RNA sequence: GGGAACGACUCGAGUAGAGUCGAAAAAAUGGACGCAUGAACCAGGAAUUCCUAGUAGUCGCGUGUCACUAACGGGCGACGACUGCGUCCCUGUUCUUUGUACACACCGCCCGUCGUUAUCUAAGAUAUUGUGAUAUUUGUUCGCAAAUAUCACAAUAAAAGAAACAACAACAACAAC
Reactivity to 2A3 in 0.01 (KOAc 150mM, MgCl2 10mM, bicine 150mM(pH8.5), 24C), signal-to-noise 4, nucleotides 027 to 126: a000a020u100g010g000a010c020g010c010a040u100g080a010a030c020c000a020g050g050a050a240u200u130c020c000u010a030g030u020a020g000u000c040g020c210g200u050g050u060c090a060c210u110a150a020c030g010g020g040c010g010a050c000g010a020c040u040g000c010g020u020c000c010c020u000g050u060u010c010u030u090u100g060u070a010c020a000c000a010c040c030g010c000c030c010g080u070c020g040u050u070a120u130c050u030a120a040g030a140u030
Reactivity to DMS in 0.01 (KOAc 150mM, MgCl2 10mM, bicine 150mM(pH8.5), 24C), signal-to-noise 5, nucleotides 027 to 126: a050a050u000g010g000a060c020g020c040a060u010g010a110a060c080c040a030g000g010a300a180u000u000c030c030u010a060g010u000a040g010u000c030g010c060g000u000g010u000c130a110c230u010a080a070c070g010g010g020c010g010a170c020g000a070c060u000g000c060g020u020c030c010c110u000g000u000u000c040u000u000u010g020u020a070c120a060c080a090c090c050g030c010c010c030g010u010c080g000u000u000a070u010c020u000a090a150g010a160u000